Structure probing data (DMS and 2A3) for a 177-nucleotide construct. It was measured as part of the RMDB library TTRDEL.
RNA sequence: GGGAACGACUCGAGUAGAGUCGAAAAGAUAUGGACGGCUGUAUGGAGCUGGGUCGGAAACGAUUAGCUAUGAAGUACACCGUCCUAAGUCAAAAGUGAUCAUCUACCUUCGGGUAGAUGAUCACAACUAUAAUUGAACGUUCGCGUUCAAUUAUAGAAAAGAAACAACAACAACAAC
Reactivity to DMS in 0.01 (KOAc 150mM, MgCl2 10mM, bicine 150mM(pH8.5), 24C), signal-to-noise 6, nucleotides 027 to 126: g000a030u000a300u010g000g000a020c000g000g000c300u000g020u000a000u000g000g000a020g020c010u000g020g030g000u000c010g010g010a090a080a130c010g010a020u000u000a050g020c000u010a220u000g010a110a190g000u000a010c010a030c010c000g000u000c000c000u000a010a070g010u000c030a060a080a130a120g010u000g000a010u000c000a000u000c000u000a000c000c000u000u020c190g020g000g000u000a000g010a000u000g000a010u000c000a000c000a010a110
Reactivity to 2A3 in 0.01 (KOAc 150mM, MgCl2 10mM, bicine 150mM(pH8.5), 24C), signal-to-noise 5, nucleotides 027 to 126: g010a020u060a020u100g000g010a000c020g040g040c290u030g010u030a020u060g130g060a000g000c020u120g120g090g060u020c010g010g010a040a030a020c000g000a030u040u030a010g010c000u070a170u300g090a270a020g000u000a000c000a010c010c000g000u000c000c000u000a000a000g000u000c010a040a050a030a100g010u010g000a000u000c000a000u000c010u010a000c010c000u030u140c300g030g000g000u000a000g000a000u000g000a000u000c000a000c000a000a000